[RMDB]
RNA sequence: GGGAACGACUCGAGUAGAGUCGAAAAGGGAGACCCGAGCAGAGGCAUAGCGAACUGCGCACGGCGAAGCCUUGAGGGAAGGCCGUAGGACCCGGGUUCGAUUCCCGGCAGCUCCACCGAAGGGCCACGGUCCGAUAUCAUUCGUGAUAUCGGACCGAAAAGAAACAACAACAACAAC
Reactivity to 2A3 in 0.01 (KOAc 150mM, MgCl2 10mM, bicine 150mM(pH8.5), 24C), signal-to-noise 2, nucleotides 027 to 126: g060g000g000a060g010a050c000c010c020g000a040g020c050a010g040a020g070g030c060a100u130a090g020c030g070a050a050c030u110g020c010g030c040a000c050g030g050c040g020a090a030g070c010c000u030u030g080a090g000g010g010a010a050g030g000c000c010g090u080a050g000g020a030c020c000c000g010g010g010u030u050c040g030a080u060u100c010c000c010g010g000c010a040g020c020u020c010c030a030c000c030g050a090a070g020g010g010c000c040a010
Reactivity to DMS in 0.01 (KOAc 150mM, MgCl2 10mM, bicine 150mM(pH8.5), 24C), signal-to-noise 2, nucleotides 027 to 126: g000g000g020a070g030a160c270c000c000g030a110g080c070a050g020a180g050g020c070a110u090a170g020c010g000a070a100c020u000g010c080g010c160a070c060g040g010c070g000a080a210g030c040c010u020u030g000a250g000g000g000a150a060g000g000c000c030g010u040a120g010g000a100c110c000c030g000g000g000u000u020c140g020a300u000u000c050c000c010g000g010c190a080g000c030u030c000c000a280c020c020g010a130a030g000g000g040c000c050a160